[RMDB]
RNA sequence: GGGAACGACUCGAGUAGAGUCGAAAAAGUAGUGCACUACGGUGCACUACAACGAUGUUAUGAUGAUGGGCGAAAUGUUCAACUGCUCUGAAGGGGCUGAAUGAAAAUGGCCUUUCUGAACAUCCAAAAAAUAGGGUUCGUUCGCGAACCCUAUUUUAAAAGAAACAACAACAACAAC
Reactivity to 2A3 in 0.01 (KOAc 150mM, MgCl2 10mM, bicine 150mM(pH8.5), 24C), signal-to-noise 1, nucleotides 027 to 126: a000g000u000a000g010u000g060c010a000c010u000a010c170g130g030u030g000c010a000c010u000a000c000a000a030c030g010a000u020g000u070u030a100u280g140a020u010g000a000u000g050g000g010c080g070a110a050a000u120g020u070u020c020a030a030c050u020g000c000u020c060u110g300a140a110g000g000g020g000c010u010g170a200a120u070g010a000a000a010a160u110g040g000c000c000u000u000u010c010u000g050a000a000c000a010u010c030c000a010a080
Reactivity to DMS in 0.01 (KOAc 150mM, MgCl2 10mM, bicine 150mM(pH8.5), 24C), signal-to-noise 1, nucleotides 027 to 126: a130g010u000a000g010u000g030c000a010c000u040a140c140g080g000u010g000c000a000c000u000a000c000a100a100c150g000a020u010g000u010u010a170u020g000a120u000g040a000u000g000g010g050c010g050a070a120a080u000g020u070u020c000a010a060c030u000g000c000u000c020u000g030a090a160g000g000g000g000c010u020g010a060a040u000g000a030a000a050a080u000g000g000c000c000u000u000u010c000u000g020a040a010c050a030u000c010c180a020a010